Overview
Source: RMDB library OK1LIB, as collected in RNAgym. An RNA of 177 nucleotides, treated with DMS and 2A3 and read out base by base. The 2A3 profile rests on 11,879 reads. 2A3 adducts were read by reverse transcription with SuperScript II with manganese. DMS (dimethyl sulfate) methylates the pairing face of unpaired adenines and cytosines. The RNA was probed in 150 mM KOAc, 10 mM MgCl2 and 150 mM bicine (pH 8.5) at 24 C. For DMS, 8,042 sequencing reads were counted.

[RMDB]
RNA sequence: GGGAACGACUCGAGUAGAGUCGAAAAAUACGUUCUGGGGCGCGCCGAGCAAAAGGUUCCAGCAAACAACUCACAGCAUGAGCCUUGGAGAUGCCGCCUUGAACCUCCGACUCCUUUAAUACCCUGGCGAUGAGUAUAUCUUCGGAUAUACUCAUCGAAAAGAAACAACAACAACAAC
Reactivity to DMS in 0.01 (KOAc 150mM, MgCl2 10mM, bicine 150mM(pH8.5), 24C), signal-to-noise 5, nucleotides 027 to 126: a120u030a100c130g010u010u000c000u030g030g000g000g010c020g020c140g020c030c040g000a180g000c130a130a040a040a040g010g010u000u000c030c090a090g000c100a080a100a150c170a070a150c150u020c080a070c200a150g000c040a200u000g000a100g000c040c010u010u000g000g010a110g000a120u020g000c050c040g020c010c020u010u000g000a050a050c030c030u000c040c000g000a070c030u000c030c010u000u000u020a060a070u040a100c030c000c010u010g010g010
Reactivity to 2A3 in 0.01 (KOAc 150mM, MgCl2 10mM, bicine 150mM(pH8.5), 24C), signal-to-noise 6, nucleotides 027 to 126: a000u140a030c060g010u020u010c020u070g010g000g040g000c030g030c050g010c020c040g090a090g080c050a040a100a040a000g000g000u020u010c050c020a010g030c030a050a090a100c060a050a090c060u080c120a130c030a050g020c030a070u110g020a010g020c010c010u050u050g030g020a100g000a040u080g030c020c000g010c010c000u000u030g010a010a010c000c020u020c020c020g060a080c030u060c010c000u060u080u070a090a070u140a170c000c010c030u040g110g020